Conditions: 150 mM KOAc, 10 mM MgCl2 and 150 mM bicine (pH 8.5), 24 C. This 177-nucleotide RNA was probed chemically with 2A3 and DMS. Reactivities are rounded to 0.1 and cut off at 0 and 3.
[RMDB]
RNA sequence: GGGAACGACUCGAGUAGAGUCGAAAAGAUAUGGACAAUGUGAAGGUCGAAGAACUUCUUCGGAAACGAAGAAGGGAGACCCACAUUUGUCCUAAGUCAAAGACAUCGAUGUUCGCAUCGAUGUCAACUUUCUAACGCAGUUCGCUGCGUUAGAAAGAAAAGAAACAACAACAACAAC
Reactivity to 2A3 in 0.01 (KOAc 150mM, MgCl2 10mM, bicine 150mM(pH8.5), 24C), signal-to-noise 3, nucleotides 027 to 126: g010a010u030a030u080g000g010a000c010a010a010u000g020u020g150a300a300g090g000u010c000g140a300a010g000a000a020c000u000u010c000u010u000c010g010g000a010a020a010c010g000a000a000g000a000a000g000g000g000a000g000a010c000c070c000a000c010a000u060u070u130g010u000c000c000u000a020a010g010u010c050a080a040a180g000a000c000a000u010c000g000a000u020g070u110u150c300g040c150a000u000c000g000a000u000g000u000c000a000a000
Reactivity to DMS in 0.01 (KOAc 150mM, MgCl2 10mM, bicine 150mM(pH8.5), 24C), signal-to-noise 3, nucleotides 027 to 126: g020a040u020a290u010g010g020a020c010a020a000u000g030u000g000a300a130g020g040u000c000g020a120a160g000a170a200c020u000u000c000u010u000c010g010g000a040a040a080c000g010a000a000g000a000a010g000g010g000a060g030a020c010c180c010a000c010a020u020u000u000g010u000c000c010u000a000a050g010u000c040a160a130a160g000a010c010a040u000c010g020a010u000g010u000u010c220g020c010a010u000c000g010a000u010g000u010c010a020a060
Reactivities are given for positions 27 through 126.